[RMDB]
RNA sequence: GGGAACGACUCGAGUAGAGUCGAAAAGAUAUGGAAUUAGCUGAUCUUGGAGCUCUAAUGGCAGCUUUCGGAAACGAAAGAACUACUGCCAGAUGAGCUAUGAAGAGAUCAGCUAAUUCCUAAGUCACUCAAGUAGUGAGUUCGCUCACUACUUGAGAAAAGAAACAACAACAACAAC
Reactivity to DMS in 0.01 (KOAc 150mM, MgCl2 10mM, bicine 150mM(pH8.5), 24C), signal-to-noise 2, nucleotides 027 to 126: g000a070u010a300u000g000g020a010a000u010u000a010g020c000u000g030a010u000c000u010u000g010g030a010g020c010u000c000u000a200a300u000g010g000c000a000g020c020u000u000u000c010g040g000a080a090a210c000g010a010a030a010g000a050a010c040u030a300c020u000g010c010c000a000g000a180u020g000a030g020c000u000a110u020g000a140a270g000a010g010a000u000c010a010g000c010u000a000a010u000u000c000c000u000a020a070g000u000c040a220
Source: RMDB library TTRINS, as collected in RNAgym. Structure probing data (DMS) for a 177-nucleotide construct. For DMS the reverse transcriptase was MarathonRT. Reactivities are given for positions 27 through 126.